[RMDB]
RNA sequence: GGGAACGACUCGAGUAGAGUCGAAAAGAUUCCUCGUUGUUGAGCGAGGUUUAAACAAAUCGACCACACAAACGUAGAGCCGACUACGGAUUUAUAAAUUAAGGCAUUAAGUGUGAUAAGGAGACAUAAAACGAUGUUGUGUUCGCACAACAUCGAAGGGUUUAAAUACGUUCGCGUAUUUAAACCCAAAAGAAACAACAACAACAAC
Reactivity to 2A3 in 0.01 (KOAc 150mM, MgCl2 10mM, bicine 150mM(pH8.5), 24C), signal-to-noise 2, nucleotides 027 to 156: g070a170u130u130c000c000u000c000g000u010u000g010u010u000g000a000g000c000g010a000g000g060u060u090u020a000a000a000c070a010a010a000u010c000g000a010c000c010a010c000a010c000a020a100a030c000g000u000a000g000a000g010c020c020g030a050c010u000a000c010g020g010a010u080u300u000a180u110a090a020a040u070u160a010a020g000g020c000a010u110u190a060a040g020u010g000u000g000a000u030a040a050g150g010a050g030a060c100a070u190a100a090a060a020c010g000a000u000g000u000u000g000u000g010u000u000c060g050c050a000c000a000a000c000a000u000c000g000a020a000
Reactivity to DMS in 0.01 (KOAc 150mM, MgCl2 10mM, bicine 150mM(pH8.5), 24C), signal-to-noise 1, nucleotides 027 to 156: g020a290u010u010c060c000u000c040g020u000u010g050u010u000g000a270g030c020g020a100g000g020u000u000u000a060a040a160c090a060a000a080u000c010g010a040c030c020a030c020a090c060a160a060a100c030g010u010a010g010a200g030c100c010g030a080c020u000a090c000g000g000a210u030u010u010a030u000a020a050a080u000u010a030a080g030g030c060a230u000u010a040a150g020u000g010u000g000a100u000a050a100g000g000a160g000a090c040a080u000a060a030a070a230c040g000a010u000g000u000u020g020u010g000u010u000c300g040c020a020c000a000a000c020a000u000c000g000a030a040

Structure probing data (2A3 and DMS) for a 207-nucleotide construct. For 2A3 the reverse transcriptase was SuperScript II with manganese. Source: RMDB library M2RFPK, as collected in RNAgym. The DMS profile rests on 1,667 reads.